The data come from the RNA Mapping Database (RMDB), library OK2TST. An RNA of 177 nucleotides, treated with 2A3 and DMS and read out base by base. The reactions ran in a buffer of 150 mM KOAc, 10 mM MgCl2 and 150 mM bicine (pH 8.5), at 24 C. For 2A3 the reverse transcriptase was SuperScript II with manganese. The 2A3 profile rests on 14,144 reads.
[RMDB]
RNA sequence: GGGAACGACUCGAGUAGAGUCGAAAAAGGGGUGAGGAGAGGUUCCGCUGGCUCGCUUCUGGCGGCUAUCAGGGCGAGUUUAGCGAGCCAACGAUAGACAAGGACUUGUUCGUGGUGGGUCCCCUGGAUCUUCUACAAAAUUCGUUUUGUAGAAGAUAAAAGAAACAACAACAACAAC
Reactivity to 2A3 in 0.01 (KOAc 150mM, MgCl2 10mM, bicine 150mM(pH8.5), 24C), signal-to-noise 6, nucleotides 027 to 126: a010g020g010g010g020u070g050a090g030g020a070g010a030g030g000u040u020c090c020g000c000u000g000g010c000u000c010g010c000u300u240c000u160g100g040c120g100g050c080u100a090u260c030a020g030g010g000c020g000a000g000u020u040u090a010g010c000g000a000g000c000c000a020a010c030g030a050u090a070g050a020c030a040a040g100g030a100c060u060u080g050u140u060c040g030u080g080g300u160g050g010g000u010c000c000c000c010u000g000g030
Reactivity to DMS in 0.01 (KOAc 150mM, MgCl2 10mM, bicine 150mM(pH8.5), 24C), signal-to-noise 9, nucleotides 027 to 126: a040g010g000g010g030u000g000a160g000g000a090g010a150g010g010u000u000c120c020g020c010u000g000g010c010u000c010g010c010u000u010c010u000g010g010c240g020g020c200u010a060u000c040a030g000g000g010c000g010a030g010u000u000u010a010g030c000g000a040g000c000c000a030a050c090g000a130u010a180g010a080c080a050a080g010g010a100c120u000u000g000u000u000c060g000u010g000g000u010g000g000g000u000c010c010c010c020u000g010g000